[RMDB]
RNA sequence: GGGAACGACUCGAGUAGAGUCGAAAAGGUAGUGCGUACCGCCACCGGGGCUGCGGCAGUAGUGGAACAAAACGGCGAGCGUACGCCGGUAUUUUGUGACGGCACCAAUUGCACGUUGGGCAGCCCGACUUUUAGUACCGUUCGCGGUACUAAAAGUAAAAGAAACAACAACAACAAC
Reactivity to 2A3 in 0.01 (KOAc 150mM, MgCl2 10mM, bicine 150mM(pH8.5), 24C), signal-to-noise 2, nucleotides 027 to 126: g030g000u060a010g000u040g120c030g060u050a080c040c050g050c020c010a020c030c000g020g010g040g000c020u030g010c000g060g000c060a040g000u120a020g030u070g090g010a050a000c020a030a040a040a020c010g010g000c000g020a080g130c130g100u130a050c020g010c000c030g000g010u170a250u010u050u020u000g000u020g030a060c030g060g080c000a000c030c030a030a030u050u110g010c060a020c150g040u060u040g000g060g020c020a010g000c000c000c000g010
Reactivity to DMS in 0.01 (KOAc 150mM, MgCl2 10mM, bicine 150mM(pH8.5), 24C), signal-to-noise 4, nucleotides 027 to 126: g000g020u000a090g030u010g000c050g020u000a090c080c060g010c040c020a110c060c050g030g010g010g000c010u000g020c030g020g020c060a060g000u010a080g030u010g000g000a150a040c040a040a020a030a080c020g000g000c000g020a220g010c270g020u010a110c020g010c000c010g000g000u010a030u000u000u000u000g000u000g000a120c180g020g010c000a300c030c030a050a060u000u000g000c030a030c130g010u000u000g000g010g010c010a050g000c000c000c010g010